[RMDB]
The data come from the RNA Mapping Database (RMDB), library TTRDES. Chemical mapping of a 177-nucleotide RNA with DMS and 2A3. The RNA was probed in 150 mM KOAc, 10 mM MgCl2 and 150 mM bicine (pH 8.5) at 24 C.
RNA sequence: GGGAACGACUCGAGUAGAGUCGAAAAGAUAUGGACCAGAGUCGCGAUAAGCUGUACUCGGAAACGAGUAUCAGCUUUUGACGCGACACUGGUCCUAAGUCAAAGUGAAGUUGUUCGCAACUUCACACGCAAGGAAUAGGUUCGCCUAUUCCUUGCGAAAAGAAACAACAACAACAAC
Reactivity to DMS in 0.01 (KOAc 150mM, MgCl2 10mM, bicine 150mM(pH8.5), 24C), signal-to-noise 3, nucleotides 027 to 126: g010a000u000a070u010g000g000a010c000c000a010g010a090g010u000c000g020c000g040a110u010a010a020g010c000u000g010u000a000c000u000c000g020g000a010a030a040c000g000a010g000u000a010u030c020a000g010c000u000u000u000u010g010a190c060g040c000g000a010c000a030c000u000g000g000u000c000c000u000a000a040g000u000c000a120a160a160g000u000g000a020a030g020u000u000g010u000u010c250g010c020a010a010c000u000u000c000a000c010a090
Reactivity to 2A3 in 0.01 (KOAc 150mM, MgCl2 10mM, bicine 150mM(pH8.5), 24C), signal-to-noise 3, nucleotides 027 to 126: g020a010u050a010u070g000g000a000c010c000a000g000a020g020u010c000g000c020g090a190u110a300a010g020c000u010g010u010a000c000u000c020g000g020a010a010a000c020g000a000g000u030a050u300c030a020g000c000u020u010u000u070g040a040c010g000c000g000a000c000a000c000u000g000g020u000c010c000u000a010a000g020u000c020a090a060a020g010u000g020a010a030g000u000u030g020u080u220c300g010c170a000a000c000u010u000c000a010c000a000
The 2A3 profile rests on 8,429 reads.
High 2A3 reactivity points to a flexible backbone, as in loops and unpaired stretches.